Structure probing data (2A3) for a 207-nucleotide construct. The 2A3 profile rests on 366 reads. The reactions ran in a buffer of 150 mM KOAc, 10 mM MgCl2 and 150 mM bicine (pH 8.5), at 24 C. 2A3 adducts were read by reverse transcription with SuperScript II with manganese.
RNA sequence: GGGAACGACUCGAGUAGAGUCGAAAAUAACUUAACUCCACAAGCUCUGGGCAUGUCACUGACUUGCCUCCUGGUGUCUAUGGCCUCAGAUGAUUCAGUGCAGAAUCUUAUGUCUAUUGCUAUGGGAGGGAGAAUUGCAAUACAUGGUCCACACAUAUCGUACUACGGUCUUCGGACCGUAGUACGAAAAAGAAACAACAACAACAAC
Reactivity to 2A3 in 0.01 (KOAc 150mM, MgCl2 10mM, bicine 150mM(pH8.5), 24C), signal-to-noise 1, nucleotides 027 to 156: u030a030a030c060u120u210a080a020c000u050c060c040a100c050a220a000g000c010u000c000u030g000g000g000c000a000u010g000u040c020a020c060u070g030a000c000u010u010g090c040c000u100c000c000u080g010g060u030g040u100c080u110a130u140g020g060c000c000u100c030a000g010a040u060g030a020u030u030c020a020g180u060g130c060a000g020a150a030u070c070u040u090a110u070g000u030c000u030a020u030u110g000c000u010a100u200g010g010g010a020g070g080g020a000g090a150a050u030u080g000c030a090a040u000a080c000a030u100g000g000u140c010c030a080c000a000c090a180u100a050